[RMDB]
RNA sequence: GGGAACGACUCGAGUAGAGUCGAAAAUACCGUCUUCUCCCCGACGGUUUCAAUCCAUAGCUUCACGUUGUGUAGCGUAGGUGGAAAGUAUCGUGUGGUGUAUAAACACCACAUAGUCUCUUAGGGGUCAAGCUGAUAAACUUCGGUUUAUCAGCAAUGAUCAUCUCGCUUUCGAGCGAGAUGAUCAAAAAGAAACAACAACAACAAC
Reactivity to 2A3 in 0.01 (KOAc 150mM, MgCl2 10mM, bicine 150mM(pH8.5), 24C), signal-to-noise 1, nucleotides 027 to 156: u080a000c000c000g010u000c000u230u040c080u000c000c000c000c000g000a000c020g000g000u000u030u080c070a060a100u020c030c000a100u040a130g000c000u040u040c000a020c090g300u260u220g020u090g020u040a030g000c040g070u060a060g060g090u030g000g050a180a020a000g040u040a000u150c010g000u000g000u000g010g000u000g080u010a040u100a300a250a050c000a000c000c000a000c000a000u000a000g000u000c000u000c010u190u280a060g000g000g030g000u070c040a080a020g010c000u000g000a000u000a000a000a000c000u050u040c170g020g000u010u010u010a000u000c000a000g000c000a000a130

Conditions: 150 mM KOAc, 10 mM MgCl2 and 150 mM bicine (pH 8.5), 24 C. An RNA of 207 nucleotides, treated with 2A3 and read out base by base. High 2A3 reactivity points to a flexible backbone, as in loops and unpaired stretches. Values cover nucleotides 27 to 156.